[RMDB]
RNA sequence: GGGAACGACUCGAGUAGAGUCGAAAAUUCUGAGUUCCUGAGCAUUGAUUUCCAGAAAUGGUGUCUUAAUUGGCGCCACACGUCUGUCGUAGGAAUUGGUGAGAUGUAUGAUGAACUUUUCGGUCUCAUGCGACAAAACAUUCGUGUUUUGUCGCAUAAAAGAAACAACAACAACAAC
Reactivity to 2A3 in 0.01 (KOAc 150mM, MgCl2 10mM, bicine 150mM(pH8.5), 24C), signal-to-noise 2, nucleotides 027 to 126: u100u000c020u030g030a010g040u000u060c020c010u040g050a030g030c020a000u020u020g030a030u070u060u020c020c000a050g010a050a090a050u040g030g010u000g000u000c000u090u170a230a180u160u060g010g040c020g000c010c000a040c010a010c030g070u020c020u140g030u140c050g090u040a030g080g000a030a060u090u060g020g040u060g060a100g000a020u040g020u110a080u160g060a020u090g020a000a030c070u070u020u060u060c010g080g070u010c030u120c030
Reactivity to DMS in 0.01 (KOAc 150mM, MgCl2 10mM, bicine 150mM(pH8.5), 24C), signal-to-noise 2, nucleotides 027 to 126: u010u020c030u010g000a200g010u010u000c030c040u000g010a160g030c040a070u000u000g000a040u000u010u000c040c010a080g000a060a050a100u000g010g030u000g010u000c000u000u010a110a150u010u000g020g000c000g000c010c010a040c300a030c300g020u000c050u000g010u010c090g020u010a150g010g010a040a070u000u000g000g010u000g000a100g020a060u010g010u010a080u020g010a100u000g000a040a040c130u000u010u000u000c080g000g010u000c020u000c060